[RMDB]
RNA sequence: GGGAACGACUCGAGUAGAGUCGAAAAACGGCAGCAUAUACUACGGUAUAUGCUGCCGAACGAUAAUGCAACACAAGCUCAACUUGGAGACUGAUUAACUUUUUGUUUCUAUUGUACAGUUUAUAAAAGAAGGGUACUGAUUCGUCAGUACCCUUCUAAAAGAAACAACAACAACAAC
Reactivity to DMS in 0.01 (KOAc 150mM, MgCl2 10mM, bicine 150mM(pH8.5), 24C), signal-to-noise 1, nucleotides 027 to 126: a190c000g000g000c000a000g040c000a000u000a000u020a010c000u000a050c300g040g000u000a000u000a000u000g000c040u000g000c000c000g000a030a010c100g010a080u000a070a130u000g020c130a060a000c250a030c240a070a100g000c040u040c140a190a300c000u000u000g000g000a100g000a100c020u000g000a050u000u000a000a100c100u000u000u030u000u000g000u000u000u000c000u000a050u070u000g000u010a040c290a080g000u000u000u000a100u030a000a030a140
Reactivity to 2A3 in 0.01 (KOAc 150mM, MgCl2 10mM, bicine 150mM(pH8.5), 24C), signal-to-noise 2, nucleotides 027 to 126: a000c020g000g040c000a000g020c010a000u000a000u000a020c010u030a080c170g020g030u000a000u000a000u010g000c000u000g000c000c000g000a000a000c000g000a030u120a030a230u190g070c030a040a000c020a040c000a260a060g020c000u070c100a040a130c060u070u060g090g010a020g000a060c020u140g040a140u050u090a060a220c040u160u100u030u020u040g000u020u070u010c020u000a150u080u130g070u050a110c080a100g040u020u110u160a200u070a040a090a020
Record summary
Chemical mapping of a 177-nucleotide RNA with DMS and 2A3. DMS adducts were read by reverse transcription with MarathonRT. For DMS, 1,207 sequencing reads were counted. 2A3 adducts were read by reverse transcription with SuperScript II with manganese. For 2A3, 671 sequencing reads were counted. Conditions: 150 mM KOAc, 10 mM MgCl2 and 150 mM bicine (pH 8.5), 24 C.